An RNA of 177 nucleotides, treated with 2A3 and DMS and read out base by base.
It was measured as part of the RMDB library M2PK50.
High 2A3 reactivity points to a flexible backbone, as in loops and unpaired stretches.
DMS adducts were read by reverse transcription with MarathonRT.
Reactivities are rounded to 0.1 and cut off at 0 and 3.
The DMS profile rests on 1,556 reads.
The reactions ran in a buffer of 150 mM KOAc, 10 mM MgCl2 and 150 mM bicine (pH 8.5), at 24 C.
RNA sequence: GGGAACGACUCGAGUAGAGUCGAAAAUCUCAACGCUUCGGCGUUGAGAAAAUAUAAGCCAUGCACCACCAAACCAGCAUGGCAAGGAAGGAAGGAAAAUAAAAACGGUUGUCUUCGGACAACCGAACCGCUUAUACUAGUUCGCUAGUAUAAGCGGAAAAGAAACAACAACAACAAC
Reactivity to 2A3 in 0.01 (KOAc 150mM, MgCl2 10mM, bicine 150mM(pH8.5), 24C), signal-to-noise 2, nucleotides 027 to 126: u020c000u000c010a020a010c000g000c010u070u100c290g140g020c000g000u000u010g010a010g000a010a010a000a000u080a010u000a050a010g010c010c000a010u000g000c020a060c040c030a110c010c030a240a020a080c040c020a030g010c010a000u010g000g000c000a000a040g060g010a060a000g080g020a020a090g060g020a060a090a070a060u170a030a090a030a030a020c020g010g020u010u000g010u000c010u030u030c180g060g010a010c000a000a000c000c000g000a000a000
Reactivity to DMS in 0.01 (KOAc 150mM, MgCl2 10mM, bicine 150mM(pH8.5), 24C), signal-to-noise 2, nucleotides 027 to 126: u010c000u000c010a000a010c000g020c000u000u040c210g040g000c000g060u010u010g020a010g040a010a000a060a050u000a060u010a100a190g010c000c000a010u010g010c020a120c180c090a140c170c220a100a080a020c120c110a050g000c030a000u000g000g030c010a040a010g020g010a050a050g000g020a050a060g010g010a030a040a060a130u000a070a020a060a090a110c010g000g000u000u010g010u000c000u020u020c220g020g000a020c020a000a000c000c000g020a000a040